[RMDB]
Structure probing data (DMS and 2A3) for a 177-nucleotide construct. The data come from the RNA Mapping Database (RMDB), library OK1LIB. For DMS the reverse transcriptase was MarathonRT.
RNA sequence: GGGAACGACUCGAGUAGAGUCGAAAAGGGAUUGCCCGCAACGGGGCCAGCAGCGGCAGAUGCUCGGUUUCAAUGAUGUAGUACGUGUUCGACGUCGUGCCCUGUGUCGGCAACUGCGUGGCCGACGGCCCCCUGAAAGUUUCGACUUUCAGGGGGCAAAAGAAACAACAACAACAAC
Reactivity to DMS in 0.01 (KOAc 150mM, MgCl2 10mM, bicine 150mM(pH8.5), 24C), signal-to-noise 2, nucleotides 027 to 126: g070g000g040a170u010u020g000c020c000c020g060c180a070a110c210g000g030g000g000c000c040a080g000c000a040g040c300g030g000c010a070g000a030u020g000c050u020c170g010g010u030u010u060c180a070a140u040g000a040u000g020u000a120g050u000a040c190g000u000g000u020u050c060g000a000c010g110u000c040g010u000g000c030c000c000u000g010u010g000u000c000g010g020c020a020a050c110u020g020c020g000u020g020g000c000c030g020a030c120g000
Reactivity to 2A3 in 0.01 (KOAc 150mM, MgCl2 10mM, bicine 150mM(pH8.5), 24C), signal-to-noise 4, nucleotides 027 to 126: g160g030g050a220u050u110g070c010c000c010g020c000a020a060c030g010g000g040g010c000c000a010g030c010a010g040c050g050g000c040a020g020a060u030g030c060u020c030g090g000u050u140u110c110a070a070u140g070a070u110g050u190a090g060u100a110c110g080u090g090u080u150c020g030a020c050g000u050c050g040u020g030c000c000c000u020g020u020g030u010c000g000g000c000a020a030c030u080g010c100g150u160g030g010c010c020g000a030c010g000